Chemical mapping of a 177-nucleotide RNA with 2A3 and DMS. 2A3 adducts were read by reverse transcription with SuperScript II with manganese. Source: RMDB library OK2TRN, as collected in RNAgym. The RNA was probed in 150 mM KOAc, 10 mM MgCl2 and 150 mM bicine (pH 8.5) at 24 C. The 2A3 profile rests on 1,208 reads.
[RMDB]
RNA sequence: GGGAACGACUCGAGUAGAGUCGAAAAUGAUGAUAUGGAUGGUGGUGAGAUUGUACAGGAUGAUCUCAGUGUUCCUCGGUCUACUGAUGAUGUUGCUCCGCCUACUCAAAAAUCUUCUCUUGUGUCCCAGUGUUCUGUUCUUCGGAACAGAACACUGAAAAGAAACAACAACAACAAC
Reactivity to 2A3 in 0.01 (KOAc 150mM, MgCl2 10mM, bicine 150mM(pH8.5), 24C), signal-to-noise 1, nucleotides 027 to 126: u070g050a010u040g010a030u000a060u230g060g000a030u060g010g000u040g000g040u030g020a060g000a050u030u070g030u020a080c050a090g070g050a080u210g030a030u010c040u060c040a020g020u030g060u120u050c000c000u000c010g000g030u020c020u000a050c000u030g030a060u070g010a000u060g040u170u040g110c000u020c010c030g010c020c030u060a080c020u010c040a050a100a020a060a090u020c100u070u010c010u020c000u060u070g090u020g000u090c050c000
Reactivity to DMS in 0.01 (KOAc 150mM, MgCl2 10mM, bicine 150mM(pH8.5), 24C), signal-to-noise 2, nucleotides 027 to 126: u030g030a140u010g020a110u000a120u000g010g000a100u010g020g020u000g000g000u000g010a070g000a020u000u010g010u000a120c110a060g000g020a100u010g000a020u000c010u000c160a070g000u010g020u010u010c050c030u000c090g010g000u000c030u000a160c070u000g000a090u010g010a050u010g020u000u010g000c040u000c040c040g010c030c000u000a100c100u020c030a010a060a070a110a080u010c040u000u000c030u000c040u000u020g010u000g000u000c020c040